Source information: An RNA of 207 nucleotides, treated with DMS and read out base by base. Reactivities are given for positions 27 through 156. DMS adducts were read by reverse transcription with MarathonRT. Conditions: 150 mM KOAc, 10 mM MgCl2 and 150 mM bicine (pH 8.5), 24 C.
RNA sequence: GGGAACGACUCGAGUAGAGUCGAAAAGCACCUGCCGUGCAGUGAGCAUACCCCCCAUGCAGCAAAAGCACCCCCCAUGCAGCGAGGGCUCCCGCUGUGCAGUGAGCAUACCCGCUGUGCAGUGAGGGCACCUGCCGUGCAGGGCUGCUUCAGGGUAACUAAUACCGCAUUUCGAUGCGGUAUUAGUAAAAGAAACAACAACAACAAC
Reactivity to DMS in 0.01 (KOAc 150mM, MgCl2 10mM, bicine 150mM(pH8.5), 24C), signal-to-noise 1, nucleotides 027 to 156: g020c000a130c000c010u010g030c010c040g000u000g010c020a140g030u000g030a180g060c060a150u010a250c000c010c000c030c000c020a120u000g030c020a090g060c110a050a090a020a140g030c110a300c000c010c000c000c020c010a290u000g010c020a020g000c010g000a030g010g020g040c000u000c010c000c020g040c010u000g030u000g050c000a050g010u000g010a040g030c020a220u000a090c020c000c010g030c000u000g000u000g000c020a030g000u000g000a040g000g030g010c010a050c050c010u000g020c000c020g020u020g000c050a050g020g020g010c070u010g000c000u000u000c040a090g030g000g010u000a150